[RMDB]
RNA sequence: GGGAACGACUCGAGUAGAGUCGAAAACCCCGCUGGUGUGCGGAUGCCUGGUGGAUCGCCAACUGUCGUAGAUGUUGGAACUGUUGCUACCGUGCAUUGAGUUGGUGAAGCGCUGAAAAGGGCCGUAGAGUGGUAAUGGAUUCGUCCAUUACCACUCAAAAGAAACAACAACAACAAC
Reactivity to DMS in 0.01 (KOAc 150mM, MgCl2 10mM, bicine 150mM(pH8.5), 24C), signal-to-noise 3, nucleotides 027 to 126: c060c000c000c110g020c090u000g000g020u000g020u000g020c020g000g010a100u010g000c030c040u000g000g020u020g000g000a090u000c070g020c020c010a020a040c020u000g010u010c150g020u010a130g000a050u010g010u000u000g000g010a090a070c070u010g010u010u000g010c020u000a140c050c030g000u010g000c060a030u000u000g010a050g010u000u000g010g020u000g000a080a080g010c030g010c020u000g000a060a050a070a090g010g010g000c040c050g010u000a110
Reactivity to 2A3 in 0.01 (KOAc 150mM, MgCl2 10mM, bicine 150mM(pH8.5), 24C), signal-to-noise 2, nucleotides 027 to 126: c000c000c000c000g000c030u110g060g040u040g040u070g030c020g030g000a040u100g050c000c050u040g040g080u060g020g100a110u090c060g020c030c010a020a010c020u070g080u170c080g070u050a010g050a190u090g000u040u070g030g020a090a050c060u100g070u190u100g100c010u090a170c020c060g040u060g000c010a000u030u150g050a080g000u010u090g000g000u030g030a060a030g000c020g000c070u000g070a050a070a020a060g010g040g030c050c050g020u120a040